Conditions: 150 mM KOAc, 10 mM MgCl2 and 150 mM bicine (pH 8.5), 24 C. This 177-nucleotide RNA was probed chemically with DMS and 2A3. DMS adducts were read by reverse transcription with MarathonRT. Source: RMDB library OK2TRN, as collected in RNAgym.
[RMDB]
RNA sequence: GGGAACGACUCGAGUAGAGUCGAAAAGCGGCAGAAGGCCGCGGCGGCGGCCGGCGCCAGCGGGUUCUACGCGAAGUGGUUGCCGAAGCUGGUUUUCGGCGAAGGCCAACUACCCACGACGUACCGCCUUUUACAGAAGUUUCGACUUCUGUAAAAGAAAAGAAACAACAACAACAAC
Reactivity to DMS in 0.01 (KOAc 150mM, MgCl2 10mM, bicine 150mM(pH8.5), 24C), signal-to-noise 7, nucleotides 027 to 126: g010c090g010g020c020a070g010a280a230g000g010c010c000g050c040g000g010c220g000g020c030g000g020c010c010g010g020c300g000c010c030a070g050c010g000g010g000u000u010c140u000a040c010g020c030g010a300a120g010u000g000g010u000u010g010c010c000g000a110a300g010c010u010g000g010u000u000u020u010c020g010g010c020g010a100a290g000g010c190c080a020a030c030u010a050c030c030c050a120c080g010a100c040g010u010a090c030c020g000c060
Reactivity to 2A3 in 0.01 (KOAc 150mM, MgCl2 10mM, bicine 150mM(pH8.5), 24C), signal-to-noise 4, nucleotides 027 to 126: g020c030g030g000c040a040g070a300a040g100g000c000c040g000c020g020g000c060g100g020c000g000g010c040c080g000g010c020g000c010c030a000g010c000g020g000g000u140u100c050u060a010c010g000c020g030a080a020g010u020g020g000u040u040g000c000c000g050a050a010g000c020u040g000g200u180u100u190u300c040g000g000c010g030a070a010g020g000c050c000a030a010c010u020a030c000c000c030a100c060g100a050c000g020u020a050c000c010g020c010